[RMDB]
RNA sequence: GGGAACGACUCGAGUAGAGUCGAAAAGAAUUCGGAAGAUUUACUGAAUGCUCCUUUGAAGACAAUUGAGCAGUCUUCGGAUCAAGAUAGCACUAAAGGCACAAUCACUCCUACACGUACAUUAUCAGUAAUAUACCGGCUUCGGCCGGUAUAUUACAAAAGAAACAACAACAACAAC
Reactivity to DMS in 0.01 (KOAc 150mM, MgCl2 10mM, bicine 150mM(pH8.5), 24C), signal-to-noise 1, nucleotides 027 to 126: g000a060a050u010u000c000g000g020a110a080g000a160u000u000u010a100c100u000g000a020a030u000g020c050u000c020c020u000u000u000g000a100a100g020a050c020a040a060u000u010g000a070g000c100a190g010u000c000u000u010c040g000g000a010u000c060a070a040g010a070u010a040g020c000a020c020u000a010a010a030g010g000c020a040c080a010a100u000c190a090c130u010c020c010u000a030c080a050c050g000u000a060c230a140u000u000a020u000c100a050
Reactivity to 2A3 in 0.01 (KOAc 150mM, MgCl2 10mM, bicine 150mM(pH8.5), 24C), signal-to-noise 3, nucleotides 027 to 126: g020a000a050u070u110c080g040g050a040a050g070a200u120u120u140a160c030u060g060a070a090u090g010c010u040c000c000u060u040u110g060a060a040g090a080c020a050a090u060u260g040a070g030c030a020g020u000c000u000u010c000g010g030a030u060c040a000a040g000a120u050a050g040c020a000c020u080a020a060a100g020g000c020a010c050a120a070u040c010a010c050u010c000c000u060a010c000a000c050g060u120a040c000a070u070u170a100u250c050a010
Conditions: 150 mM KOAc, 10 mM MgCl2 and 150 mM bicine (pH 8.5), 24 C. Structure probing data (DMS and 2A3) for a 177-nucleotide construct. 2A3 adducts were read by reverse transcription with SuperScript II with manganese.